Conditions: 150 mM KOAc, 10 mM MgCl2 and 150 mM bicine (pH 8.5), 24 C. The record gives the reactivity of an RNA of 177 nucleotides to 2A3 and DMS. It was measured as part of the RMDB library 15KREP. For 2A3 the reverse transcriptase was SuperScript II with manganese. For DMS the reverse transcriptase was MarathonRT.

RNA sequence: GGGAACGACUCGAGUAGAGUCGAAAAGACCGCAAGGAGGAAAUUACCAGCAGGGGGUGAUCCACCCGGAGAUGAGCGGACAAGCCACAUCCAGAGGACCCCUUCAGCGAACAGAAGACCCUGGUACCUUAUGAUUAAGGUUCGCCUUAAUCAUAAGAAAAGAAACAACAACAACAAC
Reactivity to 2A3 in 0.01 (KOAc 150mM, MgCl2 10mM, bicine 150mM(pH8.5), 24C), signal-to-noise 3, nucleotides 027 to 126: g040a020c010c010g010c090a040a040g040g050a020g000g030a070a090a090u070u050a080c020c010a020g030c030a020g010g000g030g000g020u030g020a050u000c010c010a020c030c020c020g010g000a050g010a080u050g010a000g030c030g030g080a090c070a090a010g020c000c010a050c010a030u010c010c000a020g030a050g060g030a060c000c010c030c020u000u030c010a030g030c010g030a040a000c010a060g090a090a010g030a040c000c010c010u030g050g020u060a080c000
Reactivity to DMS in 0.01 (KOAc 150mM, MgCl2 10mM, bicine 150mM(pH8.5), 24C), signal-to-noise 4, nucleotides 027 to 126: g000a150c050c030g020c150a080a120g000g010a090g010g020a050a120a080u010u000a050c040c030a080g010c100a080g020g010g000g020g020u000g010a070u000c030c030a120c070c020c080g020g000a050g000a050u000g010a300g010c020g010g030a080c140a110a100g000c010c030a050c100a130u000c010c020a120g000a180g000g010a120c020c030c060c020u000u000c040a070g000c030g000a060a010c050a070g000a070a060g000a130c050c030c000u010g030g000u000a080c190